[RMDB]
RNA sequence: GGGAACGACUCGAGUAGAGUCGAAAAGUGCCUCGUCGGCCCGGCAUGCCAACCUGAUCCGAAGUUCAAGGUGGUUUCUCUGGCCUUCCAGAGAGAUGCGCGUCGGAAGAACCGACGAGCAAACCUUAAAACAAAACGACGUUCGCGUCGUUUUGAAGACAAAUUACUACUUCGGUAGUAAUUUGUCAAAAGAAACAACAACAACAAC
Reactivity to DMS in 0.01 (KOAc 150mM, MgCl2 10mM, bicine 150mM(pH8.5), 24C), signal-to-noise 1, nucleotides 027 to 156: g010u000g020c150c020u010c010g000u000c000g000g020c040c010c000g030g000c000a090u010g020c010c090a050a050c000c000u000g020a050u000c090c070g000a160a190g030u000u000c050a070a070g010g010u000g000g020u010u000u000c010u010c000u000g000g000c200c170u000u010c010c020a020g000a020g000a030g010a090u000g030c030g040c000g020u010c000g000g000a130a070g000a130a120c000c000g000a000c000g000a020g000c020a010a040a110c040c010u000u000a050a090a110a250c000a030a000a010a000c000g010a040c020g080u000u020c300g000c020g050u000c000g010u000u000u000u000g010a080a170
Reactivity to 2A3 in 0.01 (KOAc 150mM, MgCl2 10mM, bicine 150mM(pH8.5), 24C), signal-to-noise 4, nucleotides 027 to 156: g070u010g050c050c030u020c000g000u010c000g000g020c010c000c000g010g010c010a030u090g020c000c030a080a110c030c000u020g010a020u050c020c040g070a100a040g030u050u060c060a060a020g000g010u010g020g010u000u090u000c000u000c000u000g030g000c040c090u210u180c010c000a000g010a000g000a020g010a060u130g070c090g020c050g010u020c000g010g030a100a050g020a080a090c000c000g000a000c000g010a000g010c000a000a040a040c010c010u110u180a090a090a030a040c000a010a000a000a000c000g010a010c020g010u040u080c250g030c010g100u010c000g020u010u000u000u000g000a010a000